[RMDB]
RNA sequence: GGGAACGACUCGAGUAGAGUCGAAAAUGGAUGCCCACGGCAAGGCGACGAUUUCCAACGAUGGAGCCACCAUCAUGAAGCUGCUGGAGAUCAUCCACCCGGCGGCCAAGACCCUGGUGGACAUUGCACGUAUCCAGCCUUUCGAGGCUGGAUACGUAAAAGAAACAACAACAACAAC
Reactivity to 2A3 in 0.01 (KOAc 150mM, MgCl2 10mM, bicine 150mM(pH8.5), 24C), signal-to-noise 2, nucleotides 027 to 126: u150g050g000a030u010g000c000c000c010a040c080g060g000c050a100a100g000g000c040g020a060c050g090a180u070u100u080c010c010a050a020c040g020a060u080g020g050a050g040c010c000a040c050c000a000u060c010a030u050g060a040a050g000c050u010g010c000u030g000g010a070g000a180u230c030a050u030c010c000a020c020c000c020g030g000c050g040g030c000c020a060a040g100a070c060c000c020u000g070g000u000g020g000a000c000a060u040u160g020c080
Reactivity to DMS in 0.01 (KOAc 150mM, MgCl2 10mM, bicine 150mM(pH8.5), 24C), signal-to-noise 2, nucleotides 027 to 126: u010g000g030a030u010g030c010c000c080a160c070g010g010c090a140a110g000g000c110g010a170c090g090a040u040u020u010c000c010a090a120c210g000a000u040g000g020a040g010c050c080a100c000c020a000u000c070a070u030g000a170a240g000c000u000g000c050u000g030g000a000g030a090u010c050a010u000c030c000a260c120c010c000g000g010c040g010g000c010c100a200a150g000a050c270c010c010u000g000g000u000g000g000a150c070a020u040u000g020c210